[RMDB]
RNA sequence: GGGAACGACUCGAGUAGAGUCGAAAAAAGAUAUGGACGAGCCGAAAGGGUGAUGACCAUUGGCGGAUGUACAUCGGAAACGAUGUACGGAUGCCAAUGCAAGCCCUGAGGCUCGUCCUAAGUCAAAGGGACGAUAGAUGUUCGCAUCUAUCGUCCCAAAAGAAACAACAACAACAAC
Reactivity to DMS in 0.01 (KOAc 150mM, MgCl2 10mM, bicine 150mM(pH8.5), 24C), signal-to-noise 1, nucleotides 027 to 126: a160a140g000a090u020a300u000g000g000a040c020g000a040g110c000c000g000a280a260a020g000g000g040u000g000a020u040g020a240c300c000a000u000u000g000g000c000g000g000a300u020g070u000a000c000a070u000c000g150g000a230a230a110c000g000a000u000g020u000a000c000g000g000a300u000g070c000c000a000a000u000g020c000a130a200g000c000c000c000u000g000a300g060g000c000u000c000g000u040c000c060u000a020a000g090u020c020a000a110a000

Structure probing data (DMS) for a 177-nucleotide construct.
The RNA was probed in 150 mM KOAc, 10 mM MgCl2 and 150 mM bicine (pH 8.5) at 24 C.
The data come from the RNA Mapping Database (RMDB), library TTRDES.
Values cover nucleotides 27 to 126.